An RNA of 177 nucleotides, treated with DMS and 2A3 and read out base by base.
It was measured as part of the RMDB library OK2TRN.
2A3 adducts were read by reverse transcription with SuperScript II with manganese.
For DMS, 7,144 sequencing reads were counted.
Conditions: 150 mM KOAc, 10 mM MgCl2 and 150 mM bicine (pH 8.5), 24 C.
RNA sequence: GGGAACGACUCGAGUAGAGUCGAAAAGGAUCGCGUACCUCGAGGAUCGCGAUCCGUAGUACAUCAUAUGUCAGAUCGGCCCUGAUGAUCGUACCACUGUGGAUCAGACUAGUACGGCCUAUCGGUACUUCUUCUGAUACUUCGGUAUCAGAAGAAGAAAAGAAACAACAACAACAAC
Reactivity to DMS in 0.01 (KOAc 150mM, MgCl2 10mM, bicine 150mM(pH8.5), 24C), signal-to-noise 7, nucleotides 027 to 126: g010g000a010u000c010g020c020g020u000a300c030c010u010c260g010a180g010g000a250u000c000g020c010g010a010u000c000c000g010u010a050g000u010a070c150a060u010c140a120u010a220u010g000u000c040a070g010a070u000c040g010g000c030c030c040u000g000a080u000g000a050u010c080g010u000a050c020c130a090c080u000g010u010g010g000a070u000c030a050g010a100c150u000a080g020u000a030c070g000g010c020c020u000a030u000c040g010g000u010a130
Reactivity to 2A3 in 0.01 (KOAc 150mM, MgCl2 10mM, bicine 150mM(pH8.5), 24C), signal-to-noise 6, nucleotides 027 to 126: g000g000a000u010c010g000c010g020u110a180c010c010u150c200g110a290g050g050a080u060c010g000c000g010a000u000c010c000g000u010a010g000u020a020c060a090u130c040a060u140a080u300g120u090c020a020g010a060u020c020g030g010c030c000c000u050g020a060u020g000a030u040c040g030u080a050c000c060a200c170u200g050u170g120g020a040u060c010a000g110a180c060u090a030g050u060a070c090g010g000c000c010u040a040u030c000g040g000u010a060